[RMDB]
RNA sequence: GGGAACGACUCGAGUAGAGUCGAAAAAUACGGUCAGGAAACUGGUCGGUGAGAAGGACGAUACCGAUCUCCUGCUUCUGGACCUCACCAUGCCGGGCGGUACGGGACUUUCCGGACUUGUCGCGCACACCAUACUAAUAUUCGUAUUAGUAUGGUGAAAAGAAACAACAACAACAAC
Reactivity to DMS in 0.01 (KOAc 150mM, MgCl2 10mM, bicine 150mM(pH8.5), 24C), signal-to-noise 9, nucleotides 027 to 126: a090u010a090c110g010g000u000c010a110g010g000a070a070a080c080u010g000g010u000c020g010g010u010g010a130g010a120a100g010g010a090c120g010a160u000a070c050c030g000a070u000c020u000c070c090u000g010c070u000u000c040u000g010g010a060c040c010u000c100a100c040c040a100u000g010c040c030g020g010g010c060g000g000u000a020c040g000g010g000a130c210u010u000u010c020c010g000g000a040c040u000u010g020u000c030g010c110g010c110a250
Reactivity to 2A3 in 0.01 (KOAc 150mM, MgCl2 10mM, bicine 150mM(pH8.5), 24C), signal-to-noise 9, nucleotides 027 to 126: a000u110a030c050g000g010u010c010a010g000g040a040a070a110c050u080g010g010u020c020g000g000u040g020a120g050a110a100g170g090a030c080g030a070u100a110c020c020g010a040u000c030u020c020c030u050g020c030u050u030c020u050g080g020a050c000c010u020c020a070c030c010a030u080g020c030c010g050g020g000c020g000g010u020a030c020g000g010g140a190c070u090u140u020c020c000g010g020a020c020u120u230g070u070c040g000c010g000c140a010
Structure probing data (DMS and 2A3) for a 177-nucleotide construct. In probing experiments dimethyl sulfate is read out at A N1 and C N3, which are open when not base-paired. The DMS profile rests on 46,290 reads. It was measured as part of the RMDB library OK2TST. Conditions: 150 mM KOAc, 10 mM MgCl2 and 150 mM bicine (pH 8.5), 24 C.